The record gives the reactivity of an RNA of 177 nucleotides to 2A3 and DMS. It was measured as part of the RMDB library M2PK50. Values cover nucleotides 27 to 126. DMS adducts were read by reverse transcription with MarathonRT. For 2A3, 3,043 sequencing reads were counted. The RNA was probed in 150 mM KOAc, 10 mM MgCl2 and 150 mM bicine (pH 8.5) at 24 C.
RNA sequence: GGGAACGACUCGAGUAGAGUCGAAAAACCUGAUGAUUCGUCAUCAGGUCACAUGCCGCCCGAACGGCUUCCUGACCGGGCGGAUUCACUAUAAAUGGAGCACUGCUGCAUCAUUCGUGAUGCAGAAUAACCACGUACUGUUCGCAGUACGUGGUUAAAAAGAAACAACAACAACAAC
Reactivity to 2A3 in 0.01 (KOAc 150mM, MgCl2 10mM, bicine 150mM(pH8.5), 24C), signal-to-noise 3, nucleotides 027 to 126: a000c000c000u010g010a000u010g000a000u000u100c170g050u010c100a000u000c010a000g000g000u000c020a080c010a040u170g060c010c000g000c000c000c000g000a030a010c120g060g000c000u180u140c000c020u010g040a050c010c010g010g000g000c030g000g000a020u100u110c080a060c130u160a090u090a300a100a130u190g010g000a010g000c010a010c130u170g010c020u010g000c020a000u010c000a030u040u150c200g070u040g010a000u010g000c000a000g000a000a000
Reactivity to DMS in 0.01 (KOAc 150mM, MgCl2 10mM, bicine 150mM(pH8.5), 24C), signal-to-noise 2, nucleotides 027 to 126: a020c000c000u000g000a000u000g010a020u010u020c150g020u000c000a000u000c010a010g020g000u000c070a050c120a110u010g000c010c000g000c010c000c010g020a050a300c110g000g010c020u000u030c010c010u010g000a160c120c030g010g020g020c010g000g000a040u000u000c080a100c120u000a080u010a050a070a150u010g000g000a030g000c040a200c240u000g010c000u000g000c000a000u000c000a020u000u020c120g000u000g010a020u000g000c000a000g000a070a110